The record gives the reactivity of an RNA of 177 nucleotides to 2A3 and DMS. It was measured as part of the RMDB library RFM100. 2A3 adducts were read by reverse transcription with SuperScript II with manganese. For 2A3, 1,563 sequencing reads were counted. Reactivities are given for positions 27 through 126.

[RMDB]
RNA sequence: GGGAACGACUCGAGUAGAGUCGAAAAACGCCGACUACGGUCGGCGAAGGGUUUGGAUUGUUGUACUUUUUUUUUUGUUCGUUGCAUUUUUAGGAACAAAAAAAAAAGCCCAACCCUUCACACCGAACAGACACUUUAUUUUCGAAUAAAGUGUCUGAAAAGAAACAACAACAACAAC
Reactivity to 2A3 in 0.01 (KOAc 150mM, MgCl2 10mM, bicine 150mM(pH8.5), 24C), signal-to-noise 3, nucleotides 027 to 126: a000c030g000c010c010g010a000c000u000a000c200g120g010u000c000g020g000c010g000a000a000g040g010g010u030u110u120g050g020a110u100u110g060u040u080g030u080a080c050u010u010u010u000u000u010u010u000u010u010g030u040u010c110g100u090u160g130c140a290u150u130u110u200u280a100g030g040a010a040c020a000a010a000a000a000a000a000a000a000a010g010c020c000c010a000a000c000c000c000u000u000c000a010c010a000c010c010g000a110a020
Reactivity to DMS in 0.01 (KOAc 150mM, MgCl2 10mM, bicine 150mM(pH8.5), 24C), signal-to-noise 2, nucleotides 027 to 126: a120c100g010c000c000g000a040c010u000a110c100g010g010u010c020g020g000c000g000a000a000g000g000g000u050u020u030g040g000a290u040u000g010u020u000g000u020a300c000u050u000u000u000u000u000u000u000u000u000g000u000u000c000g000u020u000g010c240a110u010u050u040u070u010a050g000g000a030a040c000a010a000a000a000a000a000a000a000a010a010g020c300c020c000a010a010c000c010c000u010u000c070a100c120a120c010c010g030a100a280